Source: RMDB library OK1LIB, as collected in RNAgym. This 177-nucleotide RNA was probed chemically with 2A3 and DMS. The reactions ran in a buffer of 150 mM KOAc, 10 mM MgCl2 and 150 mM bicine (pH 8.5), at 24 C. 2A3 adducts were read by reverse transcription with SuperScript II with manganese. For DMS the reverse transcriptase was MarathonRT.

RNA sequence: GGGAACGACUCGAGUAGAGUCGAAAAGAUGAGGUUAAGAACUAGAGAGAACUAGAGACGCGUGAUGACGCUCAAGAGAAAACGCGAGAGUGAGCAAGUGUGCUAGACGAAGCACACAAGAGGAAGAGCUCGCAUAAUCAUUCGUGAUUAUGCGAGCAAAAGAAACAACAACAACAAC
Reactivity to 2A3 in 0.01 (KOAc 150mM, MgCl2 10mM, bicine 150mM(pH8.5), 24C), signal-to-noise 2, nucleotides 027 to 126: g060a010u120g020a000g020g000u070u100a070a000g010a080a030c020u040a070g000a000g010a000g000a090a000c020u020a000g000a020g000a130c030g000c000g060u080g040a080u110g010a010c050g010c030u010c030a020a020g040a000g000a010a080a000a000c040g000c000g020a010g000a000g100u100g020a000g030c030a090a220g040u060g000u010g030c000u000a000g020a070c110g220a070a000g010c010a000c000a000c000a000a030g080a030g050g030a090a040g020a000
Reactivity to DMS in 0.01 (KOAc 150mM, MgCl2 10mM, bicine 150mM(pH8.5), 24C), signal-to-noise 2, nucleotides 027 to 126: g000a110u010g030a050g000g000u000u040a030a030g000a070a050c040u000a030g020a080g020a100g000a060a100c050u000a050g000a080g050a110c050g000c000g020u000g050a120u040g000a070c070g000c040u010c040a060a100g010a100g000a080a040a010a050c080g000c010g030a060g010a050g020u010g020a030g010c060a090a070g020u000g010u000g000c000u000a060g000a200c300g000a110a000g010c000a020c000a000c000a010a110g000a090g010g000a120a060g000a110